Chemical mapping of a 207-nucleotide RNA with 2A3. The RNA was probed in 150 mM KOAc, 10 mM MgCl2 and 150 mM bicine (pH 8.5) at 24 C. For 2A3, 294 sequencing reads were counted. Values cover nucleotides 27 to 156. 2A3 adducts were read by reverse transcription with SuperScript II with manganese.

RNA sequence: GGGAACGACUCGAGUAGAGUCGAAAAUAGUAAAACGUUUAAAGCGCAUUCUACCUGCUUCCUGUGAUCGCAUGUUUUUGAAAUCAGGAUCUGUAAAUGUGCCUCUAGGAUCGUGCCAUUCGGGGCCUGCAAAGUCUUGGAAUAUUUCCGAAUGCGCCAACCAGACCAGAUUCGUCUGGUCUGGUUGAAAAGAAACAACAACAACAAC
Reactivity to 2A3 in 0.01 (KOAc 150mM, MgCl2 10mM, bicine 150mM(pH8.5), 24C), signal-to-noise 1, nucleotides 027 to 156: u190a030g090u100a000a080a080a080c040g010u010u200u200a000a160a000g030c000g010c000a010u050u030c060u040a060c050c130u120g040c210u060u000c010c010u010g030u000g040a000u030c010g040c270a300u070g040u130u180u020u180u300g090a040a040a060u010c000a000g000g010a000u040c010u010g000u090a000a060a100u010g000u000g010c010c010u060c010u070a190g110g050a210u100c040g010u060g000c150c000a000u060u020c010g020g000g000g020c000c000u000g000c030a160a050a200g010u100c040u150u080g000g000a190a000u220a160u190u200u090c000c000g000a060a000u030g060c110g000c020